[RMDB]
RNA sequence: GGGAACGACUCGAGUAGAGUCGAAAAUUGCAGCAAGAAUCAAGCCUGGAACUGAAAGACUCACUCUUACCAUCCCCAGUGCCUCCAGAUCCUGUGGGACAAUGUGAUUCUGAUGUGAGUAGCAGCAUGCUUGAACUACAUUCGUGUAGUUCAAGCAAAAAGAAACAACAACAACAAC
Reactivity to 2A3 in 0.01 (KOAc 150mM, MgCl2 10mM, bicine 150mM(pH8.5), 24C), signal-to-noise 2, nucleotides 027 to 126: u060u040g030c000a020g000c000a020a100g060a120a110u130c060a060a020g080c020c000u050g050g020a050a080c030u050g060a210a050a040g010a000c010u000c010a010c000u050c020u030u060a020c010c010a020u020c000c020c020c000a010g060u080g050c020c000u050c060c000a000g010a150u080c010c000u030g040u230g080g010g000a010c030a040a070u080g050u080g020a120u130u000c020u050g090a100u090g000u030g040a010g000u020a050g000c040a000g000c020a040
Reactivity to DMS in 0.01 (KOAc 150mM, MgCl2 10mM, bicine 150mM(pH8.5), 24C), signal-to-noise 3, nucleotides 027 to 126: u010u010g020c030a040g020c060a050a090g000a100a110u010c080a070a110g010c060c020u000g000g000a100a050c040u000g000a130a070a090g000a030c050u000c020a030c020u000c100u000u010a130c100c110a170u000c030c020c000c060a060g010u010g000c080c030u000c050c100a090g000a080u020c050c030u010g020u010g010g000g000a050c130a050a090u010g010u000g000a060u000u000c050u000g000a040u000g010u000g010a060g000u010a050g000c030a050g020c080a100
An RNA of 177 nucleotides, treated with 2A3 and DMS and read out base by base. 2A3 adducts were read by reverse transcription with SuperScript II with manganese. The RNA was probed in 150 mM KOAc, 10 mM MgCl2 and 150 mM bicine (pH 8.5) at 24 C. High 2A3 reactivity points to a flexible backbone, as in loops and unpaired stretches. Source: RMDB library OK2TST, as collected in RNAgym.